[RMDB]
RNA sequence: GGGAACGACUCGAGUAGAGUCGAAAAGAUAUGGACCAGCGAAGAACACCUCCACAACAGCUCGGAAACGAGACAUGUGGGUGGUGGGAGCUGGUCCUAAGUCAAAAGCUCAUGUUCGCAUGAGCAACGACACAGAGGUGUUCGCACCUCUGUGUCGAAAAGAAACAACAACAACAAC
Reactivity to 2A3 in 0.01 (KOAc 150mM, MgCl2 10mM, bicine 150mM(pH8.5), 24C), signal-to-noise 1, nucleotides 027 to 126: g010a020u060a030u100g010g030a000c010c020a000g000c020g150a300a060g050a190a000c000a030c140c010u000c030c010a020c010a090a110c020a100g020c000u000c000g040g020a050a070a050c000g030a000g090a050c010a050u100g000u010g010g170g160u220g030g030u000g000g010g010a050g000c030u000g030g000u000c000c020u010a010a010g020u000c000a090a000a030a090g000c000u010c000a030u010g080u040u130c260g000c210a000u010g010a000g000c010a000a000
Reactivity to DMS in 0.01 (KOAc 150mM, MgCl2 10mM, bicine 150mM(pH8.5), 24C), signal-to-noise 1, nucleotides 027 to 126: g000a020u030a300u000g000g020a010c040c020a000g000c000g000a130a140g040a110a250c000a000c010c000u000c000c000a030c000a000a140c300a150g000c000u000c010g010g000a080a060a250c000g000a000g010a000c090a060u000g000u000g000g030g010u040g030g040u000g000g000g030a120g060c000u000g010g000u000c000c000u000a000a060g010u010c050a060a040a220a130g000c000u010c030a010u000g000u000u010c190g010c020a010u000g000a030g000c000a060a030
An RNA of 177 nucleotides, treated with 2A3 and DMS and read out base by base. Values cover nucleotides 27 to 126. 2A3 is a SHAPE reagent: it acylates the 2'-hydroxyl of flexible nucleotides of all four kinds. For 2A3 the reverse transcriptase was SuperScript II with manganese. Values are in units of 0.01, from 0 to 300, in steps of 10. It was measured as part of the RMDB library TTRDEL. For DMS, 748 sequencing reads were counted. The RNA was probed in 150 mM KOAc, 10 mM MgCl2 and 150 mM bicine (pH 8.5) at 24 C.